[RMDB]
RNA sequence: GGGAACGACUCGAGUAGAGUCGAAAAGAUAUGGACUCGUAACCAACAGCUAUGACCUCGGAAACGAGGUAUAGACAUGGGAGAAGAGUCCUAAGUCAAAAGUUGAAGUGCUUCGGCACUUCAACAAGGAAUUCAUUAGGUUCGCCUAAUGAAUUCCAAAAGAAACAACAACAACAAC
Reactivity to DMS in 0.01 (KOAc 150mM, MgCl2 10mM, bicine 150mM(pH8.5), 24C), signal-to-noise 3, nucleotides 027 to 126: g010a010u010a300u010g000g010a000c000u000c000g000u000a120a300c020c010a050a150c260a170g000c010u000a010u000g000a020c000c000u000c010g010g000a090a090a100c000g010a010g010g000u000a000u000a000g000a050c100a190u000g000g000g020a060g000a130a240g000a030g000u000c000c000u000a010a070g010u010c020a030a100a100a090g000u010u000g000a000a020g010u000g000c010u000u010c240g030g010c000a000c000u010u000c000a000a000c000a070a090
Reactivity to 2A3 in 0.01 (KOAc 150mM, MgCl2 10mM, bicine 150mM(pH8.5), 24C), signal-to-noise 3, nucleotides 027 to 126: g020a020u050a040u120g000g000a000c000u000c010g000u030a020a050c010c030a070a190c080a130g030c010u010a010u080g300a160c000c000u000c000g040g010a030a040a020c010g020a000g000g000u000a000u000a000g000a040c090a130u140g010g010g030a040g010a050a020g000a000g010u000c000c000u010a030a010g010u010c010a010a040a060a210g000u000u000g010a000a000g000u020g000c010u060u130c270g130g000c000a020c000u000u020c000a000a000c000a010a010
An RNA of 177 nucleotides, treated with DMS and 2A3 and read out base by base. For 2A3 the reverse transcriptase was SuperScript II with manganese. DMS adducts were read by reverse transcription with MarathonRT. The RNA was probed in 150 mM KOAc, 10 mM MgCl2 and 150 mM bicine (pH 8.5) at 24 C.